[RMDB]
An RNA of 207 nucleotides, treated with 2A3 and DMS and read out base by base.
Reactivities are given for positions 27 through 156.
The reactions ran in a buffer of 150 mM KOAc, 10 mM MgCl2 and 150 mM bicine (pH 8.5), at 24 C.
Source: RMDB library RSTRND, as collected in RNAgym.

RNA sequence: GGGAACGACUCGAGUAGAGUCGAAAAGGGGAUGUAAUGGUUUCGACAGGCAUUUAUAACCUUAUAAUGCAGUAGUUUGGCAGACUAUAAUGCUACUAGGCGUUUCAAUAAACGGAACAAAAAAACAAGAAAAUGACUAUCAAGAUUUAAUGAUUAGCUAGCAACUAAUGUUCGCAUUAGUUGCUAGAAAAGAAACAACAACAACAAC
Reactivity to 2A3 in 0.01 (KOAc 150mM, MgCl2 10mM, bicine 150mM(pH8.5), 24C), signal-to-noise 4, nucleotides 027 to 156: g040g000g000g030a050u110g080u210a130a070u090g060g040u020u040u080c050g030a030c010a000g000g010c010a010u000u050u030a200u070a050a030c010c000u060u040a090u030a140a000u010g000c000a000g010u030a010g000u000u000u000g020g000c040a040g000a010c000u010a030u060a190a060u070g030c020u020a050c010u030a060g090g010c030g020u030u020u060c100a110a050u130a150a060a030c070g050g000a000a030c050a030a060a020a010a000a000a010c100a070a060g060a050a100a010a030u080g020a020c020u030a020u160c020a050a030g020a100u050u170u210a110a070u110g050a030u000u030a020g030
Reactivity to DMS in 0.01 (KOAc 150mM, MgCl2 10mM, bicine 150mM(pH8.5), 24C), signal-to-noise 2, nucleotides 027 to 156: g000g020g020g030a160u000g000u010a120a090u000g000g020u000u000u000c040g020a160c010a060g010g000c010a030u000u010u000a100u010a070a060c060c000u000u000a140u000a050a030u000g000c000a040g020u000a010g040u000u000u010g010g020c040a110g010a050c030u000a060u000a060a100u000g000c030u010a020c030u010a080g010g000c040g000u010u000u000c060a070a130u010a020a030a160c050g000g010a040a120c050a020a010a040a060a040a060a130c050a070a130g000a020a000a030a050u000g000a090c060u000a040u000c050a050a050g000a130u000u000u000a020a110u000g000a060u000u000a090g020